[RMDB]
RNA sequence: GGGAACGACUCGAGUAGAGUCGAAAACUUCGCAACUUCGGUUGCGAAGAAUGGCAGCUCGUGCCGGCGCUGGGUUCGCCGGGUUAUAAAACAUAACACAUCACUGGCUACCAUUCGUGGUAGCCAAUGAUGGGAAGAUCUUCGGAUCUUCCCAUCAAAAAGAAACAACAACAACAAC
Reactivity to DMS in 0.01 (KOAc 150mM, MgCl2 10mM, bicine 150mM(pH8.5), 24C), signal-to-noise 2, nucleotides 027 to 126: c000u000u010c000g000c000a000a000c000u000u000c180g020g000u000u000g000c000g020a010a000g010a060a070u010g000g000c170a140g000c020u000c030g020u000g000c000c000g020g000c030g020c180u000g000g000g010u000u000c010g000c000c000g000g000g030u000u000a010u020a010a030a050a070c230a070u000a000a030c040a070c090a050u010c090a050c130u000g010g000c000u000a010c000c000a030u010u030c160g030u000g010g010u000a000g000c000c000a000a000
Reactivity to 2A3 in 0.01 (KOAc 150mM, MgCl2 10mM, bicine 150mM(pH8.5), 24C), signal-to-noise 1, nucleotides 027 to 126: c000u000u000c000g000c030a020a040c000u020u020c210g130g010u000u000g000c000g010a000a000g000a000a000u050g040g020c080a040g040c000u020c030g040u070g060c000c000g020g000c070g020c090u240g020g080g040u070u040c020g000c040c070g070g000g020u150u000a180u050a090a140a020a000c040a060u120a050a030c030a000c020a040u090c010a030c000u040g010g030c030u000a020c000c010a050u090u040c120g050u000g000g000u000a000g000c000c000a000a000
The data come from the RNA Mapping Database (RMDB), library M2PK50. Chemical mapping of a 177-nucleotide RNA with DMS and 2A3. As a SHAPE reagent, 2A3 marks flexible, mostly unpaired nucleotides at the ribose 2'-OH. The DMS profile rests on 1,721 reads. The RNA was probed in 150 mM KOAc, 10 mM MgCl2 and 150 mM bicine (pH 8.5) at 24 C. Values cover nucleotides 27 to 126. Reactivities are rounded to 0.1 and cut off at 0 and 3.